[RMDB]
RNA sequence: GGGAACGACUCGAGUAGAGUCGAAAACCAUUCCUUAUACCUUGAGUAUUGCUGAAUUCAGUUUAGCGUGCAUGCUCUUGGCUAUUCUCAAAGUGAUUGUCAAAUUUGGAGUUACUUAUUCGUCAAUAAAACACUACCACGUUCGCGUGGUAGUGAACAAUCUAGCCUCGUUCGCGAGGCUAGAUUGAAAAGAAACAACAACAACAAC
Reactivity to 2A3 in 0.01 (KOAc 150mM, MgCl2 10mM, bicine 150mM(pH8.5), 24C), signal-to-noise 2, nucleotides 027 to 156: c010c000a020u110u100c000c030u180u110a050u010a120c010c000u000u030g000a020g010u080a180u280u210g040c050u050g020a130a160u110u130c040a140g160u080u160u110a060g040c100g030u030g030c010a020u000g000c000u000c000u010u040g010g000c000u010a020u080u030c180u000c080a130a060a010g020u130g050a120u170u000g160u130c020a040a040a230u170u180u110g080g000a050g050u110u110a090c030u130u130a080u180u190c050g040u050c150a130a100u070a120a110a000a000c000a000c000u000a000c000c000a000c000g000u080u020c170g000c010g110u000g000g000u000a000g000u000g000a000a000
Reactivity to DMS in 0.01 (KOAc 150mM, MgCl2 10mM, bicine 150mM(pH8.5), 24C), signal-to-noise 1, nucleotides 027 to 156: c010c070a110u000u000c020c020u010u020a250u000a050c020c010u020u000g010a150g050u000a060u000u000g050c010u000g000a090a210u000u000c170a200g000u000u020u000a060g020c020g030u000g100c100a110u000g020c100u020c010u000u000g020g060c020u010a060u000u000c000u000c030a080a170a060g020u000g000a090u000u000g020u000c020a040a130a170u000u000u000g020g000a190g000u000u000a030c010u000u000a120u020u000c010g010u000c050a080a070u020a120a090a030a240c000a000c000u000a000c010c010a000c000g040u000u000c300g010c000g030u000g030g040u020a000g020u000g000a050a040